The record gives the reactivity of an RNA of 207 nucleotides to 2A3. It was measured as part of the RMDB library PDB130. Conditions: 150 mM KOAc, 10 mM MgCl2 and 150 mM bicine (pH 8.5), 24 C.

RNA sequence: GGGAACGACUCGAGUAGAGUCGAAAAUACAAUGCUCUGGUACAUAGAGAAAGGUACACUCAGGGAAGUCGGCAAAAUAGAUGCGUAAGUUCGCAAGAAGCAUUGGCUCUGAGGGCAACAACUCAGAACUGCUUACGGCGGGGAAUCCAACUGUAUACUCGUUUUAUGACUUCGGUCAUAAAACGAGAAAAGAAACAACAACAACAAC
Reactivity to 2A3 in 0.01 (KOAc 150mM, MgCl2 10mM, bicine 150mM(pH8.5), 24C), signal-to-noise 1, nucleotides 027 to 156: u220a040c070a010a080u150g030c000u050c020u040g000g000u070a020c060a040u120a050g100a000g080a100a030a040g020g000u050a020c060a020c060u070c090a000g010g000g000a060a000g050u050c040g020g020c020a100a000a100a000u160a070g160a090u130g010c000g000u030a020a000g060u040u040c000g010c070a010a040g010a010a000g020c000a000u090u070g040g000c000u000c000u000g020a000g020g040g010c040a120a100c000a040a000c040u000c020a000g030a070a060c000u010g000c030u050u040a020c000g040g020c070g000g100g050g020a000a040u040c040c000a080a040c140u050g000u080a030u020a080
For 2A3 the reverse transcriptase was SuperScript II with manganese.